Conditions: 150 mM KOAc, 10 mM MgCl2 and 150 mM bicine (pH 8.5), 24 C. Chemical mapping of a 177-nucleotide RNA with 2A3. The data come from the RNA Mapping Database (RMDB), library OK1LIB.

RNA sequence: GGGAACGACUCGAGUAGAGUCGAAAAGCUAGAAUGUGCUCAGGAAUCACUUUUCCAAGAGCUCAUAAAACAUAUUAGUCCAAACUGCAUGGUUCCAAAGACAUAUGAUCUAGCGAAAGCUAUGGACAGGCACUGCUGGUUUCGACCAGCAGUGCCUAAAAGAAACAACAACAACAAC
Reactivity to 2A3 in 0.01 (KOAc 150mM, MgCl2 10mM, bicine 150mM(pH8.5), 24C), signal-to-noise 1, nucleotides 027 to 126: g040c000u030a030g040a000a000u000g010u010g000c000u000c000a000g000g030a040a030u090c170a120c300u160u290u000u000c000c000a160a100g020a000g000c000u000c040a000u000a000a030a080a040c090a000u220a250u270u120a010g000u000c000c000a020a020a020c080u050g060c090a050u070g040g000u110u000c020c110a040a000a030g220a020c080a030u030a000u040g040a070u010c000u000a000g000c000g080a000a050a000g000c010u000a000u150g040g170a040c030